[RMDB]
RNA sequence: GGGAACGACUCGAGUAGAGUCGAAAAACUGAUACCUUACGAGGUAUCAGAAUGACUUCGUGGUAGAGCGCCACGCACGGAAAAUAAAGAAAGCUCGAUUGAAACGCACCGUGUACGCACGGUGCGAAAAAGUCGAUCCAGUUCGCUGGAUCGACAACACGCAUUUCAAGUUCGCUUGAAAUGCGUGAAAAGAAACAACAACAACAAC
Reactivity to 2A3 in 0.01 (KOAc 150mM, MgCl2 10mM, bicine 150mM(pH8.5), 24C), signal-to-noise 1, nucleotides 027 to 156: a000c000u000g000a000u000a000c000c000u000u060a090c270g100a000g000g000u000a000u000c000a000g050a000a040u070g050a030c030u030u020c020g000u050g000g070u050a120g000a020g000c010g000c000c000a010c000g050c030a110c120g090g090a130a050a050a060u170a030a120a010g120a000a030a000g000c030u010c020g110a160u050u300g070a080a080a010c000g010c020a000c030c090g010u020g020u050a010c190g010c100a010c000g000g000u010g000c000g000a040a010a000a000a000g000u010c010g000a000u000c000c000a020g070u100u120c180g020c140u000g000g010a000u000c010g000a000c000a000a000
Chemical mapping of a 207-nucleotide RNA with 2A3. 2A3 is a SHAPE reagent: it acylates the 2'-hydroxyl of flexible nucleotides of all four kinds. The 2A3 profile rests on 704 reads. The data come from the RNA Mapping Database (RMDB), library M2RFPK. The reactions ran in a buffer of 150 mM KOAc, 10 mM MgCl2 and 150 mM bicine (pH 8.5), at 24 C.